[RMDB]
RNA sequence: GGGAACGACUCGAGUAGAGUCGAAAAAGAAAUCGGUUACACCUUCGUGAUAACAAGCUCAUUAAGGGUGGUUAUACAUGGGCAGGACCAUCAGAUGAUAUGGAACGAGAGUUCGGACCAGAAUACGGGCGUAGCCUAGAUUCGUCUAGGCUACGCCAAAAGAAACAACAACAACAAC
Reactivity to 2A3 in 0.01 (KOAc 150mM, MgCl2 10mM, bicine 150mM(pH8.5), 24C), signal-to-noise 1, nucleotides 027 to 126: a060g200a030a050a030u130c040g010g000u030u030a030c010a030c020c010u080u220c070g000u000g060a020u050a040a110c090a060a070g000c020u060c020a080u150u160a070a030g030g040g040u050g040g040u020u000a120u030a040c000a050u050g020g000g000c030a070g060g020a030c000c030a020u020c050a000g040a190u070g000a030u030a070u230g020g000a030a000c000g010a030g030a020g090u140u050c020g010g000a030c020c010a020g130a070a000u110a030c070g010
Reactivity to DMS in 0.01 (KOAc 150mM, MgCl2 10mM, bicine 150mM(pH8.5), 24C), signal-to-noise 2, nucleotides 027 to 126: a080g000a080a130a090u010c110g000g000u000u000a060c060a060c020c030u000u010c150g020u000g000a080u010a020a090c090a090a190g000c120u000c000a110u000u010a080a060g010g020g010u000g000g030u000u000a080u010a020c090a110u000g020g020g010c050a060g020g010a060c000c010a120u000c100a060g020a090u000g000a110u020a100u000g000g040a050a110c040g000a120g000a100g000u010u020c070g010g010a150c050c020a080g020a130a090u000a050c300g000

Conditions: 150 mM KOAc, 10 mM MgCl2 and 150 mM bicine (pH 8.5), 24 C. An RNA of 177 nucleotides, treated with 2A3 and DMS and read out base by base. For DMS the reverse transcriptase was MarathonRT. The 2A3 profile rests on 731 reads. Reactivities are given for positions 27 through 126. 2A3 adducts were read by reverse transcription with SuperScript II with manganese.